[RMDB]
RNA sequence: GGGAACGACUCGAGUAGAGUCGAAAAGUCGAUCAGGUCGGUCAGCACGGCCGUCGCGGUCUCGAACGGACAUGGUGGCAGCAGCAUCGACGACUGGCCCUCGCCAUGCACGCCGGUCAUCACUGCGGAAUAGUCGGUCAUUCGUGACCGACUAUUCAAAAGAAACAACAACAACAAC
Reactivity to DMS in 0.01 (KOAc 150mM, MgCl2 10mM, bicine 150mM(pH8.5), 24C), signal-to-noise 3, nucleotides 027 to 126: g020u000c020g010a060u010c110a100g030g010u010c040g010g020u000c050a090g010c100a150c090g010g020c000c020g000u010c050g010c020g010g000u000c060u000c050g000a070a060c040g000g000a090c010a070u000g060g020u010g000g000c090a070g000c050a120g010c040a070u010c080g010a030c050g000a090c060u010g020g010c040c040c110u000c100g020c030c030a040u000g010c100a100c170g010c010c030g030g030u000c020a080u010c100a080c090u000g010c110g010
Reactivity to 2A3 in 0.01 (KOAc 150mM, MgCl2 10mM, bicine 150mM(pH8.5), 24C), signal-to-noise 1, nucleotides 027 to 126: g070u050c010g030a050u050c060a050g000g070u060c010g040g000u020c050a000g030c060a040c080g030g000c010c050g020u010c010g000c030g050g030u010c030u010c050g030a140a040c040g030g010a000c010a060u050g040g040u040g050g040c040a050g000c020a030g010c000a150u070c070g000a030c030g020a020c030u000g040g060c000c000c050u030c040g040c020c000a060u100g050c020a020c090g020c000c000g050g030u030c020a000u040c000a000c090u080g000c000g000